[RMDB]
RNA sequence: GGGAACGACUCGAGUAGAGUCGAAAAGGUGAUGUGGAAGAGAAUCCCGGCCCAUCAUUGCGCGGGGUGCAGUGGAACUCCGCCGGGCUAUCUCAAGGAAAGAGAUUAGCACUCCACAAAACCCUUGACCAUACCGCCUAUUCGUAGGCGGUAUGGUAAAAGAAACAACAACAACAAC
Reactivity to 2A3 in 0.01 (KOAc 150mM, MgCl2 10mM, bicine 150mM(pH8.5), 24C), signal-to-noise 4, nucleotides 027 to 126: g000g000u010g010a020u040g010u020g000g010a060a070g070a080g010a080a120u060c010c010c000g020g000c010c020c000a070u110c020a050u100u300g040c150g000c020g040g070g040g020u110g020c050a080g110u150g070g080a030a030c030u040c080c000g000c000c000g000g020g000c030u030a000u010c020u000c010a070a080g190g060a120a180a040g010a010g000a000u020u020a000g030c050a020c060u000c000c000a000c000a000a030a000a040c000c000c010u020u050g020
Reactivity to DMS in 0.01 (KOAc 150mM, MgCl2 10mM, bicine 150mM(pH8.5), 24C), signal-to-noise 2, nucleotides 027 to 126: g000g000u000g000a240u010g000u040g000g020a030a070g000a120g000a070a140u010c000c020c000g020g000c000c030c010a110u010c180a120u070u030g040c140g050c000g000g000g010g000u000g000c100a090g050u000g000g000a150a050c030u010c000c030g030c000c060g000g000g010c020u010a000u000c000u000c000a050a170g010g040a050a150a090g010a050g000a020u000u000a070g000c090a210c060u030c000c000a010c020a000a070a100a080c150c000c020u000u000g000